[RMDB]
RNA sequence: GGGAACGACUCGAGUAGAGUCGAAAAGAUAUGGACCCGUAUGGAGAUGCUUCGGAAACGAACAUCGAUGAAGUACCGGGUCCUAAGUCAAAAGCACGUCCUAUGGGUUCGCCCAUAGGACGUGCAAGCAUCGUUUUAAGUUCGCUUAAAACGAUGCAAAAGAAACAACAACAACAAC
Reactivity to 2A3 in 0.01 (KOAc 150mM, MgCl2 10mM, bicine 150mM(pH8.5), 24C), signal-to-noise 2, nucleotides 027 to 126: g020a040u050a060u130g010g010a000c010c000c000g000u000a000u030g020g010a010g020a020u000g030c230u020u040c020g020g040a070a060a060c020g000a000a000c010a000u000c000g030a300u010g010a000a020g020u000a040c190c280g020g000g000u000c000c000u000a020a020g010u010c030a060a000a040a090g010c000a000c000g000u010c010c010u000a020u000g000g000g050u070u130c300g120c050c000c000a000u010a000g010g000a000c000g000u000g000c010a000a000
Reactivity to DMS in 0.01 (KOAc 150mM, MgCl2 10mM, bicine 150mM(pH8.5), 24C), signal-to-noise 2, nucleotides 027 to 126: g010a030u000a300u010g000g000a000c000c000c010g000u000a010u000g000g000a070g000a010u000g010c300u000u010c000g000g010a110a140a200c010g000a000a020c010a010u000c000g000a100u020g010a190a110g010u000a000c170c050g040g000g010u000c010c000u010a030a060g000u010c060a040a060a080a130g010c010a010c000g000u000c000c000u000a000u000g040g000g020u000u020c300g020c000c000c010a010u000a000g000g000a000c000g010u000g000c020a010a010